[RMDB]
RNA sequence: GGGAACGACUCGAGUAGAGUCGAAAAGACUGCGUGCACUGGAGACGAUAUCGAGCCGGAAAUUAAUCGAUAAUGUCUCUAGUAGUGGAUACGAUCCGGCAAGUAUCGACUACCUGUGCUCGUAGGAGGUCGUACUGACGUUCGCGUCAGUACGACCAAAAGAAACAACAACAACAAC
Reactivity to 2A3 in 0.01 (KOAc 150mM, MgCl2 10mM, bicine 150mM(pH8.5), 24C), signal-to-noise 2, nucleotides 027 to 126: g160a020c020u000g000c000g000u000g000c000a030c010u030g030g000a000g010a040c000g000a000u000a000u030c070g000a000g000c000c000g000g050a090a000a170u250u180a030a190u110c000g000a000u040a100a090u290g010u000c000u000c000u020a040g020u050a000g000u000g170g000a040u070a030c000g010a000u000c000c010g000g010c030a070a070g000u000a000u000c040g070a010c060u070a120c000c020u000g020u000g000c010u040c000g050u070a000g010g000a090
This 177-nucleotide RNA was probed chemically with 2A3. Conditions: 150 mM KOAc, 10 mM MgCl2 and 150 mM bicine (pH 8.5), 24 C. The 2A3 profile rests on 1,050 reads.